[RMDB]
RNA sequence: GGGAACGACUCGAGUAGAGUCGAAAAAGAAGGCAAAAUUAAACCUGGCGACACAAUUGUAGAACCAACAAGUGGUAAUACAGGUAUCGGUUUAGCAUUUGUAUGUGCUGCUAAAGGAUAUAAAGCAACCAAACGGUCUAUUCGUAGACCGUUUGGUAAAAGAAACAACAACAACAAC
Reactivity to DMS in 0.01 (KOAc 150mM, MgCl2 10mM, bicine 150mM(pH8.5), 24C), signal-to-noise 2, nucleotides 027 to 126: a070g010a090a030g000g010c050a060a040a080a100u000u030a010a070a070c020c000u010g020g000c060g000a060c070a070c030a030a090u020u000g040u010a110g000a190a040c050c050a040a110c160a060a090g080u000g010g000u010a090a160u010a020c000a020g000g030u000a030u000c010g020g000u000u000u000a070g010c000a030u000u000u000g020u030a050u030g040u000g000c060u040g000c010u020a030a020a000g020g000a060u010a080u010a010a070a150g000c080a100
Reactivity to 2A3 in 0.01 (KOAc 150mM, MgCl2 10mM, bicine 150mM(pH8.5), 24C), signal-to-noise 4, nucleotides 027 to 126: a000g100a030a040g110g010c070a130a020a020a180u140u120a130a050a080c000c070u020g020g020c010g020a030c000a000c000a070a100u050u050g030u040a040g040a050a010c010c000a020a110c040a200a020g120u010g120g050u070a070a020u140a090c030a070g020g030u100a090u200c140g040g050u020u020u080a020g000c000a030u060u010u070g110u070a150u070g070u060g070c060u050g000c010u060a200a020a000g030g020a010u090a000u040a110a110a000g090c020a020
Structure probing data (DMS and 2A3) for a 177-nucleotide construct. For DMS, 3,108 sequencing reads were counted. Reactivities are rounded to 0.1 and cut off at 0 and 3. 2A3 adducts were read by reverse transcription with SuperScript II with manganese. Reactivities are given for positions 27 through 126.